[RMDB]
RNA sequence: GGGAACGACUCGAGUAGAGUCGAAAAGAUAUGGAUCAAAGGGAGAGCGUACUCGGAAACGAGUAUGGCUCGAAGAACUUUGAGUCCUAAGUCAAAAGGCACCGAAUAGUUCGCUAUUCGGUGCCAAGUUAAAAUAUCAGUUCGCUGAUAUUUUAACAAAAGAAACAACAACAACAAC
Reactivity to 2A3 in 0.01 (KOAc 150mM, MgCl2 10mM, bicine 150mM(pH8.5), 24C), signal-to-noise 2, nucleotides 027 to 126: g010a000u010a000u040g000g000a000u000c010a000a010a010g010g000g000a010g000a000g020c000g000u000a000c000u000c000g010g010a020a000a000c010g000a010g020u010a000u050g160g020c000u000c010g020a020a000g000a000a010c000u020u010u010g010a010g160u100c010c000u000a010a000g000u000c010a000a020a030a220g000g000c010a000c000c010g020a010a000u000a000g050u090u090c300g010c200u010a000u010u000c000g010g000u000g000c000c000a000a000
Reactivity to DMS in 0.01 (KOAc 150mM, MgCl2 10mM, bicine 150mM(pH8.5), 24C), signal-to-noise 4, nucleotides 027 to 126: g000a010u000a000u010g000g000a200u000c000a000a000a010g000g000g000a010g010a010g020c010g000u000a000c000u000c000g020g000a000a000a010c000g000a010g010u000a000u000g030g030c000u000c000g000a080a130g000a160a170c000u000u000u000g000a020g010u010c010c000u000a000a100g000u000c000a090a070a150a130g010g020c000a000c010c000g010a010a000u000a010g010u000u010c230g030c000u000a010u000u000c000g010g010u000g000c000c000a010a010